[RMDB]
Conditions: 150 mM KOAc, 10 mM MgCl2 and 150 mM bicine (pH 8.5), 24 C. The record gives the reactivity of an RNA of 177 nucleotides to DMS.
RNA sequence: GGGAACGACUCGAGUAGAGUCGAAAAGAUAUGGAUACCCAUAGAGCGAAGAACUCGGAAACGAGGGAGCUCGUGGUGUAUCCUAAGUCAAAAGGUGUAAAAACGGGUUCGCCCGUUUUUACACCAACUUGCUAAGGAGGUUCGCCUCCUUAGCAAGAAAAGAAACAACAACAACAAC
Reactivity to DMS in 0.01 (KOAc 150mM, MgCl2 10mM, bicine 150mM(pH8.5), 24C), signal-to-noise 1, nucleotides 027 to 126: g000a020u020a300u000g000g000a000u010a000c000c000c000a010u010a110g000a000g100c000g000a070a230g000a160a240c000u010c010g000g000a100a090a260c000g020a020g020g000g000a100g010c000u000c000g010u010g010g000u000g000u000a000u000c000c020u000a010a050g000u000c050a040a040a110a070g000g000u000g010u000a020a000a000a000a000c020g020g010g020u010u020c300g000c010c000c000g000u000u000u000u000u000a000c000a000c000c010a020a010

It was measured as part of the RMDB library TTRDEL. Reactivities are rounded to 0.1 and cut off at 0 and 3.